[RMDB]
RNA sequence: GGGAACGACUCGAGUAGAGUCGAAAAGAUAUGGAUUCCUCGUAGGGAGAUGUGGCUCGGAAACGAGCCAUACAUCUUUGAUCUACGGGAAUCCUAAGUCAAAGACGCUCUGUUCGCAGAGCGUCAAGGUUUAAUAGCUGUUCGCAGCUAUUAAACCAAAAGAAACAACAACAACAAC
Reactivity to DMS in 0.01 (KOAc 150mM, MgCl2 10mM, bicine 150mM(pH8.5), 24C), signal-to-noise 2, nucleotides 027 to 126: g010a020u020a300u010g010g010a000u000u000c000c000u000c030g030u000a010g010g000g010a020g010a020u000g010u000g020g020c010u000c000g000g010a100a090a150c000g010a010g010c000c000a030u000a040c110a030u000c000u000u010u020g000a070u000c000u010a000c000g030g000g000a010a000u000c000c000u000a010a070g000u000c030a100a120a160g000a010c010g030c000u000c000u000g010u010u000c260g040c020a020g010a030g010c000g010u010c000a020a050
Reactivity to 2A3 in 0.01 (KOAc 150mM, MgCl2 10mM, bicine 150mM(pH8.5), 24C), signal-to-noise 2, nucleotides 027 to 126: g020a010u070a050u120g000g020a010u030u010c020c050u200c060g000u020a020g030g130g060a130g000a020u000g010u010g020g000c010u000c010g020g030a030a040a000c000g000a000g000c000c000a000u010a010c000a000u010c000u250u130u280g110a100u070c010u000a000c010g000g030g000a000a010u010c000c000u000a050a000g030u010c000a070a130a120g000a010c000g000c000u000c010u010g080u090u110c300g010c150a020g000a000g020c000g010u010c000a000a000